Structure probing data (DMS and 2A3) for a 177-nucleotide construct. DMS adducts were read by reverse transcription with MarathonRT. Reactivities are rounded to 0.1 and cut off at 0 and 3. The DMS profile rests on 1,112 reads. The RNA was probed in 150 mM KOAc, 10 mM MgCl2 and 150 mM bicine (pH 8.5) at 24 C. Source: RMDB library M2PK90, as collected in RNAgym.
[RMDB]
RNA sequence: GGGAACGACUCGAGUAGAGUCGAAAAAUACAGCGUAAUCGAGCGGAGGAAAACGGCACUCCGAAAAUCCGGUACGAUUAUGAUCGCACUGCGUCGACGCUAGAUGCAGAACCGGAUUGCCGAGGAAGACUAGGCGUACAUUCGUGUACGCCUAGUCAAAAGAAACAACAACAACAAC
Reactivity to DMS in 0.01 (KOAc 150mM, MgCl2 10mM, bicine 150mM(pH8.5), 24C), signal-to-noise 2, nucleotides 027 to 126: a060u060a100c060a060g000c010g030u000a030a120u010c090g020a140g040c020g000g010a020g010g000a010a060a130a190c070g010g010c030a130c030u000c000c030g010a030a080a010a060u000c000c000g000g020u020a300c090g010a060u000u030a120u000g020a120u000c030g070c300a120c010u000g000c010g010u000c010g030a180c150g010c150u030a040g040a000u000g020c000a020g000a250a070c000c000g030g010a030u000u000g010c050c010g010a110g020g040a120a080
Reactivity to 2A3 in 0.01 (KOAc 150mM, MgCl2 10mM, bicine 150mM(pH8.5), 24C), signal-to-noise 2, nucleotides 027 to 126: a000u130a020c070a040g030c020g090u090a080a090u110c060g050a050g120c010g030g000a000g020g050a040a090a060a070c020g000g000c010a040c020u020c010c020g030a030a010a000a000u000c000c000g010g050u040a050c020g030a020u140u060a180u300g230a030u030c020g010c050a020c030u000g000c010g000u000c010g020a060c080g060c170u040a020g000a010u020g000c000a000g020a010a040c000c000g000g000a000u010u020g010c020c000g010a050g050g120a040a160